[RMDB]
RNA sequence: GGGAACGACUCGAGUAGAGUCGAAAAACCUAUGGAUUCGUCCAUAGGUGCUGGCGCGCGGCCUUUGUCCUGUCGCGUGUGCGUGGUGGGCGAUAUAGGCGCAAUAGUGACAAUUCGUUGUCACUAAUUGAUUUGACGGAUUCGUCCGUCAAAUCAAAAAAGAAACAACAACAACAAC
Reactivity to DMS in 0.01 (KOAc 150mM, MgCl2 10mM, bicine 150mM(pH8.5), 24C), signal-to-noise 1, nucleotides 027 to 126: a040c000c000u000a000u000g010g000a020u000u020c190g020u000c000c000a010u000a000g000g000u000g030c110u010g020g020c040g010c070g020c050g000g010c030c120u000u020u010g000u010c060c070u000g010u000c010g020c000g030u000g010u000g030c060g060u000g000g010u000g000g010g000c030g020a060u000a090u000a120g010g010c020g010c060a080a110u000a000g020u000g010a020c000a000a030u000u000c190g010u000u000g010u000c000a010c010u000a020a050
Structure probing data (DMS) for a 177-nucleotide construct. The reactions ran in a buffer of 150 mM KOAc, 10 mM MgCl2 and 150 mM bicine (pH 8.5), at 24 C. The DMS profile rests on 1,830 reads.